[RMDB]
RNA sequence: GGGAACGACUCGAGUAGAGUCGAAAACGCCUGACGGUGCGGCCAGGGCGGCUGCCGGGGAUGAUCGCCGGCGUGGCGGCGAAACGAAUGAACCGCGAACAGUUCUUCCGCGCGGCGUCGGGGCUCGCUCCUGCUACUGCUUCGGCAGUAGCAGGAGAAAAGAAACAACAACAACAAC
Reactivity to 2A3 in 0.01 (KOAc 150mM, MgCl2 10mM, bicine 150mM(pH8.5), 24C), signal-to-noise 2, nucleotides 027 to 126: c040g060c000c000u000g000a030c000g090g300u010g000c010g000g030c050c120a170g040g030g000c000g000g000c010u030g010c000c000g010g000g000g040a040u120g020a040u130c020g010c030c020g030g050c090g020u090g110g000c000g010g000c000g000a110a110a080c120g010a020a070u090g000a090a000c020c000g000c010g040a130a030c010a020g000u200u050c000u030u080c000c000g000c030g020c000g000g040c020g030u020c010g040g010g020g000c040u020c000g090